[RMDB]
RNA sequence: GGGAACGACUCGAGUAGAGUCGAAAAGAUAUGGAUAAGCGACCUCGCUUAGCGUUUGACGUCGGAAACGACCGAGCUAAGAACUACGAGGCUUAUCCUAAGUCAAACCUACCGUUCGCGGUAGGAACCUUGUUGUAGUGUUCGCACUACAACAAGGAAAAGAAACAACAACAACAAC
Reactivity to 2A3 in 0.01 (KOAc 150mM, MgCl2 10mM, bicine 150mM(pH8.5), 24C), signal-to-noise 4, nucleotides 027 to 126: g000a010u040a020u070g000g000a000u010a020a000g010c070g170a260c070c020u000c010g030c030u000u000a010g000c050g100u040u240u300g240a170c150g010u000c010g000g030a020a020a040c000g000a020c060c090g070a020g000c000u000a010a010g030a100a110c200u190a050c230g010a010g070g000c000u000u000a000u000c000c000u000a050a000g010u000c020a090a000a260c000c000u000a000c000c000g030u070u080c300g000c000g220g000u000a000g000g000a000a030
Reactivity to DMS in 0.01 (KOAc 150mM, MgCl2 10mM, bicine 150mM(pH8.5), 24C), signal-to-noise 4, nucleotides 027 to 126: g020a030u000a280u000g010g010a010u000a010a000g000c040g000a200c300c010u000c010g010c020u000u010a020g000c000g010u000u020u020g030a070c300g000u000c000g010g010a090a070a110c010g000a000c010c030g010a090g010c000u000a000a000g010a130a080c170u010a260c030g000a000g000g010c000u000u000a000u000c000c000u000a010a080g000u000c020a080a080a110c000c000u010a000c000c000g020u000u010c240g030c000g000g000u000a010g000g010a030a050

Structure probing data (2A3 and DMS) for a 177-nucleotide construct. It was measured as part of the RMDB library TTRDEL. For DMS the reverse transcriptase was MarathonRT.